The record gives the reactivity of an RNA of 207 nucleotides to DMS and 2A3. 2A3 is a SHAPE reagent: it acylates the 2'-hydroxyl of flexible nucleotides of all four kinds. The RNA was probed in 150 mM KOAc, 10 mM MgCl2 and 150 mM bicine (pH 8.5) at 24 C. For DMS the reverse transcriptase was MarathonRT.
RNA sequence: GGGAACGACUCGAGUAGAGUCGAAAAGGGGUCCAGGGACCUCGCUAAGACAGUGGUAGACAUGAACUGAAGCCUCCACGGUUCAACAGCUACCAUCGAGCGAGGUACCUGGACGGAGGCACCCAAAGGCCAUUUAAGAUUCGUCUUAAAUGGCCAACUGUUCUAUAUCCUUCGGGAUAUAGAACAGAAAAGAAACAACAACAACAAC
Reactivity to DMS in 0.01 (KOAc 150mM, MgCl2 10mM, bicine 150mM(pH8.5), 24C), signal-to-noise 1, nucleotides 027 to 156: g020g000g010g000u000c010c040a000g010g040g020a020c000c000u010c000g020c030u030a210a190g000a060c300a010g030u020g000g010u000a040g020a080c080a300u000g030a030a060c010u000g030a050a210g000c000c010u000c000c030a300c030g040g010u000u000c000a150a110c040a160g010c010u000a000c060c000a050u000c010g020a060g020c000g020a060g020g010u000a010c020c000u000g060g000a010c010g020g030a020g040g000c010a080c000c010c000a070a100a190g010g050c000c000a010u000u000u010a000a030g000a050u000u000c300g040u010c000u000u000a000a000a000u000g020g020c000c010a000a000
Reactivity to 2A3 in 0.01 (KOAc 150mM, MgCl2 10mM, bicine 150mM(pH8.5), 24C), signal-to-noise 3, nucleotides 027 to 156: g030g000g010g000u000c010c000a000g000g000g020a010c000c000u020c000g000c010u090a140a010g030a020c050a040g030u020g040g020u020a010g020a080c120a300u200g020a020a000c000u010g030a070a010g030c000c000u000c010c010a030c040g000g000u000u010c020a090a060c050a140g080c000u000a000c010c000a020u020c030g030a000g020c000g010a000g000g000u000a000c000c000u000g000g010a000c000g000g000a000g000g000c000a030c000c000c000a050a100a020g000g000c000c000a000u000u000u000a000a010g010a000u030u110c180g030u000c130u010u000a000a010a000u000g020g020c000c000a010a000